Structure probing data (DMS and 2A3) for a 177-nucleotide construct.
For DMS, 1,491 sequencing reads were counted.
2A3 adducts were read by reverse transcription with SuperScript II with manganese.
The 2A3 profile rests on 1,092 reads.
The RNA was probed in 150 mM KOAc, 10 mM MgCl2 and 150 mM bicine (pH 8.5) at 24 C.
2A3 is a SHAPE reagent: it acylates the 2'-hydroxyl of flexible nucleotides of all four kinds.
RNA sequence: GGGAACGACUCGAGUAGAGUCGAAAAUGAUGCGAACAGCAUGAGUGUGUUCCAAGAGAUGGGCUGGCCGUAGAUAUAGAUACCAGAACAAUUCCUUGUCGAUUUCCAGUCGCAACGGUAUGACAGCACCGACACUGAGAUUCGUCUCAGUGUCGGUAAAAGAAACAACAACAACAAC
Reactivity to DMS in 0.01 (KOAc 150mM, MgCl2 10mM, bicine 150mM(pH8.5), 24C), signal-to-noise 2, nucleotides 027 to 126: u000g060a090u000g000c000g010a120a090c160a080g020c100a070u020g000a060g010u000g010u000g000u000u000c010c010a130a040g010a110g000a050u010g000g010g030c030u000g000g000c050c120g000u000a060g010a130u010a070u010a110g020a130u000a080c070c020a090g000a040a060c130a080a100u000u000c030c040u000u020g020u010c050g010a090u000u000u000c060c080a140g000u000c000g010c090a020a070c050g000g000u010a070u010g000a070c130a090g000c160
Reactivity to 2A3 in 0.01 (KOAc 150mM, MgCl2 10mM, bicine 150mM(pH8.5), 24C), signal-to-noise 2, nucleotides 027 to 126: u090g030a010u100g000c070g000a110a040c020a100g080c050a050u080g000a050g050u140g030u000g030u030u000c030c050a060a040g050a000g020a080u100g020g020g050c030u020g010g010c030c010g080u020a030g030a100u050a000u020a070g070a060u050a000c080c000a030g070a060a020c040a090a130u090u040c000c040u020u060g070u100c000g040a050u080u030u000c010c020a020g020u050c040g000c040a050a000c040g000g030u110a080u150g070a030c040a030g010c030